[RMDB]
RNA sequence: GGGAACGACUCGAGUAGAGUCGAAAAGGUGCUCUGAAUGGAGUGCUCUACUGAGAUUAUAAAAUAGAAGGUAUGCUAUUAUCUCUUACAACAGGGCAGGGCUUGUUGGAAUAGGCGGUAAAGUCUAAAAACUACCUCACCUUCGGGUGAGGUAGAAGAACACAACAAAGUUCGCUUUGUUGUGUUCAAAAGAAACAACAACAACAAC
Reactivity to 2A3 in 0.01 (KOAc 150mM, MgCl2 10mM, bicine 150mM(pH8.5), 24C), signal-to-noise 2, nucleotides 027 to 156: g010g010u030g000c010u000c010u130g140a150a120u300g000g000a010g000u030g000c010u050c030u100a170c060u060g030a010g020a060u050u090a070u160a210a180a100a030u060a040g060a120a040g090g050u080a020u050g000c000u000a040u060u000a040u090c010u000c020u060u140a070c020a080a010c000a090g050g000g000c000a020g010g050g000c040u010u020g010u010u010g000g030a050a030u040a050g040g000c010g050g000u100a060a040a040g000u010c050u050a040a050a000a050a000c000u000a000c000c000u000c000a000c010c010u000u050c150g100g000g000u000g010a000g000g000u000a000g000a000a000
Reactivity to DMS in 0.01 (KOAc 150mM, MgCl2 10mM, bicine 150mM(pH8.5), 24C), signal-to-noise 1, nucleotides 027 to 156: g030g020u010g000c030u000c010u000g010a090a080u010g010g020a100g020u000g000c000u000c030u000a120c100u000g020a110g000a080u010u000a080u000a030a050a090a090u010a070g010a120a070g020g020u000a020u000g020c070u010a060u000u010a100u000c010u000c010u010u000a090c010a050a110c060a050g000g020g070c060a110g030g020g030c030u000u010g020u000u000g000g000a070a060u000a030g000g020c020g030g000u000a050a060a140g000u020c020u000a010a110a060a070a120c010u000a020c000c000u000c020a010c010c000u000u010c300g070g030g020u010g000a000g000g000u000a000g010a030a040